Chemical mapping of a 177-nucleotide RNA with 2A3. Reactivities are given for positions 27 through 126. Source: RMDB library OK1LIB, as collected in RNAgym. For 2A3 the reverse transcriptase was SuperScript II with manganese.
RNA sequence: GGGAACGACUCGAGUAGAGUCGAAAACUUUUGGCUAAUGAUGAGCAAAUUGUGCCGGAAGCAAUUUAAGCUCUAUUGAUUUUAUUGACACCGUUUUGCUUUGUAUCGAAGAGUAAAAAUAUAUACACUUUUACCCACCCUUCGGGGUGGGUAAAAGAAAAGAAACAACAACAACAAC
Reactivity to 2A3 in 0.01 (KOAc 150mM, MgCl2 10mM, bicine 150mM(pH8.5), 24C), signal-to-noise 1, nucleotides 027 to 126: c000u170u000u060u140g180g000c000u180a220a080u180g200a040u040g060a000g050c020a010a010a010u040u100g080u020g060c070c110g070g030a040a000g000c000a000a040u000u060u060a120a000g000c000u030c000u000a140u070u130g120a220u000u000u060u180a120u080u100g060a000c000a000c250c100g000u000u000u120u000g000c030u040u040u150g020u190a200u050c060g050a260a000g040a120g050u150a000a080a000a080a000u070a060u040a000u040a160c000a000